An RNA of 177 nucleotides, treated with DMS and read out base by base. The DMS profile rests on 829 reads. The RNA was probed in 150 mM KOAc, 10 mM MgCl2 and 150 mM bicine (pH 8.5) at 24 C. The data come from the RNA Mapping Database (RMDB), library RFMREP.
RNA sequence: GGGAACGACUCGAGUAGAGUCGAAAACCUUGGCUAUAGGUGGACCAAAACCGAUUAACCAUACAUUUGGCCACCAACCCCGGAUCACUGCAAACGAAAAAGUAUGGGGAUGCUCCCCGGCAUUGAACGAUAUUUCAAGGUUCGCCUUGAAAUAUCGAAAAGAAACAACAACAACAAC
Reactivity to DMS in 0.01 (KOAc 150mM, MgCl2 10mM, bicine 150mM(pH8.5), 24C), signal-to-noise 1, nucleotides 027 to 126: c010c020u000u000g030g030c060u010a100u010a140g030g020u000g010g010a200c030c010a060a020a060a120c190c120g000a080u000u000a060a130c110c100a050u000a090c080a220u020u000u000g010g010c000c020a020c010c020a080a100c070c000c010c010g030g020a020u000c040a050c020u000g000c060a080a110a160c060g030a030a100a100a060a080g010u000a080u000g010g000g010g030a050u000g010c120u000c020c010c000c010g000g020c070a030u010u000g000a110a220